[RMDB]
RNA sequence: GGGAACGACUCGAGUAGAGUCGAAAAACGCUCAGCUAAUUUUUGUAUGUUUUGUAGACACAGGGUUUAGCCAUAUUGCCCAGAGUGGUCUCGAAUUUGUGACCUCAAGCCACCCACCCACCUUGGCCUCCCAAAGUGCUGGAGUUAGGCGCAUGAAACUAUUAUAGGUGUUCGCACCUAUAAUAGUAAAAGAAACAACAACAACAAC
Reactivity to 2A3 in 0.01 (KOAc 150mM, MgCl2 10mM, bicine 150mM(pH8.5), 24C), signal-to-noise 3, nucleotides 027 to 156: a000c060g010c040u060c060a030g000c030u040a090a180u100u070u060u080u080g050u090a230u040g040u030u100u050u080g050u040a030g020a020c000a010c030a090g000g000g030u040u050u060a040g000c020c010a050u070a090u120u120g000c000c000c010a020g020a020g090u050g000g030u020c030u010c040g070a160a130u070u070u150g030u050g020a020c010c000u030c050a040a010g020c010c000a030c010c000c000a020c000c010c010a000c000c020u020u030g030g000c010c010u020c000c010c010a010a080a010g050u050g010c030u020g010g000a080g030u040u050a020g030g000c000g000c030a010u050g110a050a110